Source: RMDB library TTRDES, as collected in RNAgym. Chemical mapping of a 177-nucleotide RNA with DMS. For DMS the reverse transcriptase was MarathonRT. For DMS, 945 sequencing reads were counted. Reactivities are given for positions 27 through 126.

[RMDB]
RNA sequence: GGGAACGACUCGAGUAGAGUCGAAAAGAUAUGGAGAGAUUCGCUUUCGACUGUUAUCGGAAACGAUAAUACAGUGGCGAUCUCUCCUAAGUCAAAAGCUAGCCUAGACUUCGGUCUAGGCUAGCAACCGUGUAACUUGGUUCGCCAAGUUACACGGAAAAGAAACAACAACAACAAC
Reactivity to DMS in 0.01 (KOAc 150mM, MgCl2 10mM, bicine 150mM(pH8.5), 24C), signal-to-noise 1, nucleotides 027 to 126: g030a000u000a210u000g000g010a010g040a020g030a000u000u010c020g020c000u000u010u030c180g000a130c260u030g000u000u010a000u000c000g030g050a150a100a070c010g000a010u000a020a080u040a080c110a110g030u000g000g030c000g030a050u000c000u000c000u010c000c000u000a010a100g010u010c030a100a070a120a050g000c020u000a000g000c000c000u000a000g020a030c000u000u010c250g060g010u000c000u030a000g010g000c000u000a000g000c040a000a050